[RMDB]
RNA sequence: GGGAACGACUCGAGUAGAGUCGAAAAUAAUAUUCCCAUCGGGAACCUAUUACUGUGUCACCACUAAGGCUAAGUCCGUUCAACAAGAUCUUGACGUUAUUUUGCCUGGUGAGUUUUCCAAGAAGCAUCACUCAAAAUAGUUCGCUAUUUUGAGUGAAAAAGAAACAACAACAACAAC
Reactivity to 2A3 in 0.01 (KOAc 150mM, MgCl2 10mM, bicine 150mM(pH8.5), 24C), signal-to-noise 4, nucleotides 027 to 126: u030a010a020u050a040u070u010c000c010c000a020u110c050g040g000g020a030a040c030c030u070a090u230u120a120c090u120g040u040g060u180c000a010c030c000a010c030u080a120a050g010g010c010u000a010a010g010u010c020c000g050u150u100c020a040a040c050a130a050g040a230u060c030u010u040g000a000c000g020u090u090a030u040u020u030u030g000c000c000u000g000g000u010g000a030g020u040u020u020u010c010c000a060a020g100a060a010g060c020a060
Reactivity to DMS in 0.01 (KOAc 150mM, MgCl2 10mM, bicine 150mM(pH8.5), 24C), signal-to-noise 5, nucleotides 027 to 126: u000a100a070u000a170u000u010c000c000c010a130u010c180g010g020g010a050a020c130c110u010a080u000u000a080c110u000g010u000g000u000c060a060c040c020a090c130u000a130a020g010g010c010u000a030a030g010u000c300c020g000u010u000c030a020a020c140a120a130g000a110u010c110u000u010g000a040c010g000u000u010a030u000u000u000u000g020c010c000u010g010g000u000g010a050g010u000u000u000u010c030c010a120a110g010a140a100g000c190a120